[RMDB]
This 177-nucleotide RNA was probed chemically with DMS and 2A3.

RNA sequence: GGGAACGACUCGAGUAGAGUCGAAAAGAGCCGCGAUAGUGGGGGAGAUCAACAACUUUCCCGGCGCCUCGGUGCCGUUCGGCAUGGUGCAGUACUCGCCGGACACCGUCGACAACUACGCCGGCUAGUAUUUCUGAUACUUCGGUAUCAGAAAUACAAAAGAAACAACAACAACAAC
Reactivity to DMS in 0.01 (KOAc 150mM, MgCl2 10mM, bicine 150mM(pH8.5), 24C), signal-to-noise 5, nucleotides 027 to 126: g010a060g030c020c010g000c090g010a130u010a030g010u020g000g020g000g000g000a020g010a070u020c150a140a140c290a130a110c020u010u000u010c000c000c000g010g000c110g020c060c040u030c100g010g010u010g010c080c070g000u020u010c030g010g000c000a080u040g000g010u030g000c230a100g010u030a040c050u010c180g010c020c000g000g000a030c020a030c030c020g000u010c140g000a080c110a240a060c020u000a030c030g010c090c030g000g000c010u000a080
Reactivity to 2A3 in 0.01 (KOAc 150mM, MgCl2 10mM, bicine 150mM(pH8.5), 24C), signal-to-noise 9, nucleotides 027 to 126: g090a010g000c010c000g000c020g160a190u020a050g030u100g000g010g000g050g000a020g010a080u170c080a040a140c010a030a080c040u020u020u030c000c000c000g020g020c050g010c000c020u040c060g010g010u040g070c090c050g040u050u060c020g010g000c040a070u160g050g000u100g050c050a050g040u110a080c030u060c130g010c010c000g010g010a020c010a010c010c000g030u030c010g020a050c030a090a010c010u050a010c020g100c130c030g010g000c000u030a040